[RMDB]
RNA sequence: GGGAACGACUCGAGUAGAGUCGAAAACUCACUGAGUGAGACUGACUCUGAGUCUGACUCUCAGUGAGUCAGACAGUGUGAGUGACUGUGUCUCAGAGUGACACUGAGAGUGACUCACUCACUCUCAGGCUACUCUGCGUUUCGACGCAGAGUAGCCAAAAGAAACAACAACAACAAC
Reactivity to DMS in 0.01 (KOAc 150mM, MgCl2 10mM, bicine 150mM(pH8.5), 24C), signal-to-noise 2, nucleotides 027 to 126: c070u000c020a110c040u000g000a060g000u000g010a020g000a070c030u010g000a080c020u010c030u000g010a150g010u000c000u000g000a030c020u000c000u010c240a170g000u010g020a020g000u010c010a010g010a070c020a040g020u010g000u010g000a020g000u000g010a050c080u000g020u000g020u000c000u010c010a050g000a100g010u000g000a090c190a160c080u010g000a010g000a030g030u000g010a060c080u000c110a040c150u000c010a010c010u000c000u000c010a060
Reactivity to 2A3 in 0.01 (KOAc 150mM, MgCl2 10mM, bicine 150mM(pH8.5), 24C), signal-to-noise 3, nucleotides 027 to 126: c000u010c000a030c060u060g080a030g070u030g000a030g050a050c010u060g050a010c020u000c080u100g080a060g090u000c010u000g020a050c000u000c000u000c030a100g120u060g260a000g000u000c000a000g020a020c010a010g010u050g020u020g130a050g030u040g030a020c050u160g030u070g010u290c000u000c020a020g020a000g040u080g050a080c080a010c160u010g020a000g000a000g040u070g020a040c020u000c060a040c020u040c000a000c000u000c000u000c010a010